[RMDB]
RNA sequence: GGGAACGACUCGAGUAGAGUCGAAAAUCCGUGCGGAGGGUCAAGCAGGCUGUGCUAUUGAGCUCCGAAAUCACCACUCUCGCGUGCCGACCAUGUCCUGACAAGGGGAAGGCCACAUCGCGGGCGUGCUGCCGGAGCAGUUCGCUGCUCCGGCAGCAAAAGAAACAACAACAACAAC
Reactivity to 2A3 in 0.01 (KOAc 150mM, MgCl2 10mM, bicine 150mM(pH8.5), 24C), signal-to-noise 1, nucleotides 027 to 126: u000c000c000g050u060g030c030g000g020a020g050g080g240u030c020a000a000g030c000a000g270g230c140u300g000u130g300c000u050a070u070u090g000a000g000c000u000c000c000g000a020a020a010u090c000a000c010c000a000c000u060c000u000c000g000c000g000u050g000c000c000g000a010c000c000a100u290g080u200c000c000u060g060a270c000a130a100g000g000g080g000a080a080g000g000c000c000a000c000a050u160c020g000c060g010g000g050c000g000u060
Structure probing data (2A3) for a 177-nucleotide construct. High 2A3 reactivity points to a flexible backbone, as in loops and unpaired stretches. The reactions ran in a buffer of 150 mM KOAc, 10 mM MgCl2 and 150 mM bicine (pH 8.5), at 24 C. Values cover nucleotides 27 to 126.